The data come from the RNA Mapping Database (RMDB), libraries RFM100 and RFMREP. An RNA of 177 nucleotides, treated with 2A3 and DMS and read out base by base. The RNA was probed in 150 mM KOAc, 10 mM MgCl2 and 150 mM bicine (pH 8.5) at 24 C. Values cover nucleotides 27 to 126.

RNA sequence: GGGAACGACUCGAGUAGAGUCGAAAAUACAAGAUAUUUACUCUUGUUAGGUGAAAGUUGAUGGUCGCCGAGCCAGUCCGUACAUCCAAAAAGGACUCUAUGUAGUAGGAAGUCGAGAGCCUAUGAGGCUCAUAGAACUGUUCGCAGUUCUAUGAGCAAAAGAAACAACAACAACAAC
Reactivity to 2A3 in 0.01 (KOAc 150mM, MgCl2 10mM, bicine 150mM(pH8.5), 24C), signal-to-noise 7, nucleotides 027 to 126: u110a000c010a010a000g020a020u080a120u130u250u130a150c070u000c000u010u010g020u040u060a100g000g030u050g050a050a090a100g060u120u110g060a070u050g060g020u030c020g010c090c030g020a030g030c000c020a040g100u030c010c030g010u050a020c010a070u030c030c040a050a070a000a020a050g120g020a010c000u000c010u020a090u100g110u020a100g040u050a040g070g160a160a020g040u040c030g020a020g010a040g140c010c010u080a110u130g080a040g100
Reactivity to DMS in 0.01 (KOAc 150mM, MgCl2 10mM, bicine 150mM(pH8.5), 24C), signal-to-noise 8, nucleotides 027 to 126: u030a040c010a020a010g010a040u020a090u040u020u030a080c160u000c000u000u000g000u000u010a070g010g020u010g000a070a090a100g000u010u010g000a080u010g000g020u010c030g030c040c070g000a120g010c040c070a060g010u010c030c020g020u010a080c120a050u010c060c080a050a070a080a130a110g000g000a020c020u000c040u010a020u010g010u010a140g020u010a070g010g000a080a040g010u000c060g010a110g010a130g000c000c000u000a060u020g010a130g010